[RMDB]
RNA sequence: GGGAACGACUCGAGUAGAGUCGAAAAGCACGGCUGUCGUCAGCUCGUGUCGUGAGAUGUUGGGUUAAGUCCCGCAACGAGCGCAACCCUCGUCCUUAGUUGCUAACAGUUCGGCUGAGCACUCUAACAUUGCGUUGUCCUUCGGGACAACGCAAUGAAAAGAAACAACAACAACAAC
Reactivity to DMS in 0.01 (KOAc 150mM, MgCl2 10mM, bicine 150mM(pH8.5), 24C), signal-to-noise 1, nucleotides 027 to 126: g000c030a020c040g000g000c010u000g000u040c220g020u040c000a010g010c010u000c000g040u000g040u000c050g000u000g000a270g030a010u010g050u000u030g030g000g000u000u020a200a140g000u020c020c020c000g000c020a060a050c000g010a220g030c040g040c300a050a030c020c100c000u010c050g010u000c050c020u000u000a010g050u020u010g000c020u000a040a020c000a000g000u020u020c130g000g000c000u000g000a040g030c010a000c110u000c000u000a010a100
Reactivity to 2A3 in 0.01 (KOAc 150mM, MgCl2 10mM, bicine 150mM(pH8.5), 24C), signal-to-noise 2, nucleotides 027 to 126: g110c040a000c030g030g020c000u100g010u300c070g220u230c050a070g000c000u060c140g090u070g000u030c040g030u020g120a090g020a020u120g030u140u200g010g020g000u010u090a170a070g180u090c000c000c000g000c040a010a100c010g050a010g030c010g000c050a100a110c010c010c000u000c090g110u140c000c000u150u140a070g010u030u060g000c010u010a000a030c000a000g040u060u050c130g080g000c000u010g000a000g000c000a040c000u160c000u000a100a040

This 177-nucleotide RNA was probed chemically with DMS and 2A3. Source: RMDB libraries RFM100 and RFMREP, as collected in RNAgym. The RNA was probed in 150 mM KOAc, 10 mM MgCl2 and 150 mM bicine (pH 8.5) at 24 C. Values cover nucleotides 27 to 126.